An RNA of 177 nucleotides, treated with DMS and 2A3 and read out base by base. For 2A3, 26,320 sequencing reads were counted. The reactions ran in a buffer of 150 mM KOAc, 10 mM MgCl2 and 150 mM bicine (pH 8.5), at 24 C. High 2A3 reactivity points to a flexible backbone, as in loops and unpaired stretches.
RNA sequence: GGGAACGACUCGAGUAGAGUCGAAAAGAUAUGGACGGUGAACUACAGUCGAAUAGAGCAUCGAUCUCGGAAACGAGGGAGCUCUACGACUGCACCGUCCUAAGUCAAAGACCUCUUCGGAGGUCAACGAUAUAGGGAUGUUCGCAUCCCUAUAUCGAAAAGAAACAACAACAACAAC
Reactivity to DMS in 0.01 (KOAc 150mM, MgCl2 10mM, bicine 150mM(pH8.5), 24C), signal-to-noise 7, nucleotides 027 to 126: g020a040u000a300u000g000g010a000c000g010g000u000g010a070a050c080u020a300c030a000g000u000c000g010a160a120u010a000g010a010g020c010a300u000c150g010a050u000c010u000c000g010g010a090a100a180c000g000a010g000g010g000a020g000c000u000c000u000a010c010g000a010c000u000g000c010a000c000c000g000u000c000c000u000a000a070g000u000c030a100a110a130g000a010c000c000u000c000u000u010c130g020g000a020g000g010u000c000a010a060
Reactivity to 2A3 in 0.01 (KOAc 150mM, MgCl2 10mM, bicine 150mM(pH8.5), 24C), signal-to-noise 7, nucleotides 027 to 126: g030a030u080a040u120g010g000a000c000g000g030u020g010a080a050c100u210a080c300a010g010u000c020g020a170a300u050a090g010a000g000c030a130u300c060g090a100u020c020u000c010g040g040a100a080a040c010g000a010g000g010g010a010g000c000u000c000u010a020c010g000a000c000u000g000c010a000c000c000g000u000c000c000u000a010a000g000u000c000a010a000a050g010a000c010c000u000c020u060u100c290g150g000a000g000g000u000c000a000a010